[RMDB]
An RNA of 177 nucleotides, treated with DMS and read out base by base. The DMS profile rests on 1,843 reads. It was measured as part of the RMDB library TTRINS. Reactivities are rounded to 0.1 and cut off at 0 and 3. Conditions: 150 mM KOAc, 10 mM MgCl2 and 150 mM bicine (pH 8.5), 24 C.
RNA sequence: GGGAACGACUCGAGUAGAGUCGAAAAGAUAUGGAAGCGAGACAGGCUAUGAAGCCGCAUUCAUGGACUCCGUCGGAAACGACGGAGGUCCAUGAAUGCGGUGGAGCCUCGUUUCGCUUCCUAAGUCCAAGUGUACUAGGUUCGCCUAGUACACUUGAAAAGAAACAACAACAACAAC
Reactivity to DMS in 0.01 (KOAc 150mM, MgCl2 10mM, bicine 150mM(pH8.5), 24C), signal-to-noise 1, nucleotides 027 to 126: g010a090u000a300u010g010g000a040a010g030c000g030a030g000a000c000a030g020g010c000u000a240u020g010a110a300g000c000c000g010c000a000u000u000c000a000u020g000g000a300c010u010c000c000g040u000c010g000g010a100a100a240c020g040a040c010g000g000a010g020g020u010c030c000a000u000g000a010a000u000g010c000g000g030u010g010g010a010g010c010c010u000c190g010u000u000u000c010g010c000u000u000c000c000u000a010a090g030u000c040